[RMDB]
RNA sequence: GGGAACGACUCGAGUAGAGUCGAAAACGUACGGUAAGGGCGUACGAUGGCUUUAACGGGUACGGGGGAUCAGGGUUUGAUUCCGGAGAGGGAGCCUGAGAAACGGCUACCAGGUCUAAGGACAGCAAAGUAUCUAUACGUUCGCGUAUAGAUACUUAAAAGAAACAACAACAACAAC
Reactivity to 2A3 in 0.01 (KOAc 150mM, MgCl2 10mM, bicine 150mM(pH8.5), 24C), signal-to-noise 8, nucleotides 027 to 126: c010g000u020a000c010g010g130u130a070a090g150g100g030c010g010u010a000c010g030a090u040g030g010c050u080u070u190a100a030c040g050g000g000u140a070c050g060g000g000g000g020a050u100c050a040g040g040g000u090u140u140g080a090u090u010c010c000g020g030a040g010a020g010g010g010a010g000c000c000u020g000a020g030a030a140a020c100g000g000c000u060a150c000c010a010g050g050u000c010u020a030a020g040g010a030c010a010g070c020a070
Reactivity to DMS in 0.01 (KOAc 150mM, MgCl2 10mM, bicine 150mM(pH8.5), 24C), signal-to-noise 8, nucleotides 027 to 126: c030g010u010a020c010g000g010u020a130a130g020g020g010c000g010u000a020c020g010a130u030g000g010c130u010u010u020a090a090c150g000g000g020u000a070c090g010g010g000g010g000a050u010c060a050g010g000g010u010u010u010g000a050u010u000c000c010g000g000a090g010a130g000g000g000a040g010c010c010u000g000a170g000a070a090a130c180g000g010c010u000a050c020c000a090g010g000u000c010u010a130a080g010g000a040c160a100g010c180a060
Background: The data come from the RNA Mapping Database (RMDB), libraries RFM100 and RFMREP. This 177-nucleotide RNA was probed chemically with 2A3 and DMS. Reactivities are given for positions 27 through 126. The reactions ran in a buffer of 150 mM KOAc, 10 mM MgCl2 and 150 mM bicine (pH 8.5), at 24 C. High 2A3 reactivity points to a flexible backbone, as in loops and unpaired stretches.